[RMDB]
RNA sequence: GGGAACGACUCGAGUAGAGUCGAAAACGGCAUGAUACCACCGUUAUCGGGGCAACAGAGUAGUUGCAAAUGACAACAAUGCUCAGGGUUAUGCUCUCGCUGCCUAAUGGCGGUGCGGGAAACCCACAAAAGAUAUUGAUCUUCGGAUCAAUAUCAAGUUGCGGUGUAUCUUCGGAUACACCGCAACAAAAGAAACAACAACAACAAC
Reactivity to 2A3 in 0.01 (KOAc 150mM, MgCl2 10mM, bicine 150mM(pH8.5), 24C), signal-to-noise 2, nucleotides 027 to 156: c010g040g020c040a060u120g090a040u220a120c000c060a000c020c000g020u030u090a080u170c040g010g000g000g000c040a110a030c070a000g060a030g010u110a000g040u000u020g040c000a070a090a080u240g000a000c000a100a000c000a000a300u200g000c000u030c060a050g010g000g010u080u080a060u270g050c010u000c000u040c030g030c000u000g000c000c010u260a300a100u070g000g000c000g020g000u020g000c050g000g030g000a020a040a040c090c000c010a020c010a000a050a000a000g000a000u000a000u000u000g000a000u000c000u020u070c190g060g020a000u000c000a010a000u000a000u010c000a010a000

This 207-nucleotide RNA was probed chemically with 2A3. Values are in units of 0.01, from 0 to 300, in steps of 10. Reactivities are given for positions 27 through 156. For 2A3, 863 sequencing reads were counted. It was measured as part of the RMDB library M2RFPK. The RNA was probed in 150 mM KOAc, 10 mM MgCl2 and 150 mM bicine (pH 8.5) at 24 C.